[RMDB]
RNA sequence: GGGAACGACUCGAGUAGAGUCGAAAAUGGGCAGACUGAAAAAGGUGAAUCGUGACAAGCUAGUUGGUGACGAUUCACCUUCUUCAGUCUGCCCUAAAAGGGCUUUAGCGGUUCGCCGCUAAAGCCCCACCAAUUAGUGCUUCGGCACUAAUUGGUGAAAAGAAACAACAACAACAAC
Reactivity to DMS in 0.01 (KOAc 150mM, MgCl2 10mM, bicine 150mM(pH8.5), 24C), signal-to-noise 1, nucleotides 027 to 126: u010g000g010g010c000a010g010a030c000u000g010a000a000a020a000a020g000g040u020g000a020a000u000c010g000u000g000a050c000a050a140g020c250u020a160g000u000u010g030g000u010g010a030c010g000a030u000u000c010a010c000c000u000u000c000u000u010c010a000g000u000c000u000g000c010c010c000u000a000a010a050a050g030g010g010c000u010u000u000a010g010c000g020g020u000u010c270g020c000c000g020c010u000a000a010a020g010c000c010c010

The record gives the reactivity of an RNA of 177 nucleotides to DMS.
DMS (dimethyl sulfate) methylates the pairing face of unpaired adenines and cytosines.
For DMS, 1,789 sequencing reads were counted.
Reactivities are given for positions 27 through 126.